[RMDB]
RNA sequence: GGGAACGACUCGAGUAGAGUCGAAAAUAAAUCUUAUUCGUAAGAUUUACUUGAACGCUGCAAGCGGCAGCGCCCUCGCUUGCGCACGCACGCGCAAUAAAAAUCUGGGGACAUUCGUGUCCCCAAAGUGUUUAAUUGAGUUCGCUCAAUUAAACACAAAAGAAACAACAACAACAAC
Reactivity to 2A3 in 0.01 (KOAc 150mM, MgCl2 10mM, bicine 150mM(pH8.5), 24C), signal-to-noise 3, nucleotides 027 to 126: u010a000a000a000u000c000u020u000a020u030u060c090g040u030a000a010g010a000u020u000u000a030c040u050u100g060a080a020c030g000c010u020g000c050a160a210g290c070g200g000c090a010g000c000g020c010c010c000u000c010g040c030u020u030g000c020g010c010a020c040g110c030a020c050g030c000g010c040a020a040u150a090a190a040a000a020u100c130u040g000g000g000g000a000c000a010u030u080c180g050u030g000u010c010c000c010c000a000a000a000
Reactivity to DMS in 0.01 (KOAc 150mM, MgCl2 10mM, bicine 150mM(pH8.5), 24C), signal-to-noise 3, nucleotides 027 to 126: u000a000a000a000u000c000u010u000a010u010u000c160g000u000a000a010g010a030u010u000u000a010c060u000u010g010a170a160c030g000c000u000g000c000a140a130g020c210g010g000c000a010g020c010g020c030c010c000u000c050g010c090u010u000g010c010g020c020a100c090g000c300a030c170g000c000g010c030a060a100u010a010a130a050a080a090u010c130u010g010g000g000g000a020c010a010u000u030c180g020u000g000u000c000c000c000c000a000a000a050
This 177-nucleotide RNA was probed chemically with 2A3 and DMS. DMS adducts were read by reverse transcription with MarathonRT. Reactivities are given for positions 27 through 126. Conditions: 150 mM KOAc, 10 mM MgCl2 and 150 mM bicine (pH 8.5), 24 C. For 2A3, 3,302 sequencing reads were counted.